An RNA of 177 nucleotides, treated with DMS and 2A3 and read out base by base. High DMS reactivity at an A or C suggests that its Watson-Crick edge is free.
RNA sequence: GGGAACGACUCGAGUAGAGUCGAAAAGAACGGCAGAGAGCCGAGAAAUGAGACGAGGUAGAGUGCGCGCUCUACCAAAAGGUGUGUGUAAAAACGCACGUGUAGGCGCGGCUACACAGCUCAAGAACGAUCAUAAUAUAUUCGUAUAUUAUGAUCGAAAAGAAACAACAACAACAAC
Reactivity to DMS in 0.01 (KOAc 150mM, MgCl2 10mM, bicine 150mM(pH8.5), 24C), signal-to-noise 9, nucleotides 027 to 126: g020a130a100c010g000g010c000a170g010a150g000a230g010c000c000g000a080g010a080a110a080u010g010a030g000a060c060g010a170g010g000u000a030g000a090g010u020g010c020g010c020g010c000u080c010u000a010c010c110a030a030a100a080g020g010u000g000u010g000u010g000u010a060a100a070a120a040c000g000c000a000c000g000u040g020u000a000g000g010c010g010c000g000g000c010u000a020c020a040c030a130g000c010u000c010a050a060g010a130a120
Reactivity to 2A3 in 0.01 (KOAc 150mM, MgCl2 10mM, bicine 150mM(pH8.5), 24C), signal-to-noise 9, nucleotides 027 to 126: g040a060a010c010g010g000c060a020g100a030g030a020g290c010c010g020a030g050a020a130a040u120g010a010g030a040c070g040a080g110g020u060a020g030a040g080u260g170c020g000c010g000c020u140c010u070a000c010c000a020a060a000a040g150g000u020g000u000g000u000g010u050a040a050a020a020a010c000g010c000a010c030g030u110g000u020a000g010g000c010g000c000g030g010c000u040a010c030a000c000a020g020c000u010c010a010a040g050a060a020

The RNA was probed in 150 mM KOAc, 10 mM MgCl2 and 150 mM bicine (pH 8.5) at 24 C.